[RMDB]
RNA sequence: GGGAACGACUCGAGUAGAGUCGAAAACUGCUUGUGACGGUCUUGCUUCAGCUUAUAGGGCGAAUUCCUUUGAUGUACCUACAUUCUGCGCAAACCGUUCUGCAAUGUGUAAUUGGUGCUUGAUUAGCCUAUCAAAGUACUUCGGUACUUUGAUAGGAAAAGAAACAACAACAACAAC
Reactivity to DMS in 0.01 (KOAc 150mM, MgCl2 10mM, bicine 150mM(pH8.5), 24C), signal-to-noise 7, nucleotides 027 to 126: c060u000g000c030u010u000g010u000g010a050c010g000g010u000c200u010u000g020c010u000u010c020a020g000c060u000u000a060u000a040g000g000g010c050g020a120a120u000u010c100c220u010u010u010g010a150u010g010u010a080c030c020u000a020c060a020u000u000c020u010g040c300g000c010a010a020a020c020c010g020u000u000c020u000g020c020a050a020u000g010u000g010u010a090a040u010u010g000g020u000g000c040u000u000g000a180u010u010a130g000
Reactivity to 2A3 in 0.01 (KOAc 150mM, MgCl2 10mM, bicine 150mM(pH8.5), 24C), signal-to-noise 5, nucleotides 027 to 126: c030u020g020c010u040u080g050u100g040a000c010g000g010u020c070u060u020g000c020u160u170c000a010g000c010u030u030a020u030a050g000g010g020c050g080a110a110u130u140c050c000u110u070u230g120a100u130g030u140a190c000c010u000a010c000a010u030u000c000u010g010c000g000c010a010a020a000c010c000g010u020u040c010u020g000c000a020a070u100g040u020g030u130a010a160u060u080g070g010u050g010c010u060u040g080a080u090u120a030g030

This 177-nucleotide RNA was probed chemically with DMS and 2A3.
The reactions ran in a buffer of 150 mM KOAc, 10 mM MgCl2 and 150 mM bicine (pH 8.5), at 24 C.
The DMS profile rests on 5,358 reads.
The data come from the RNA Mapping Database (RMDB), library 15KREP.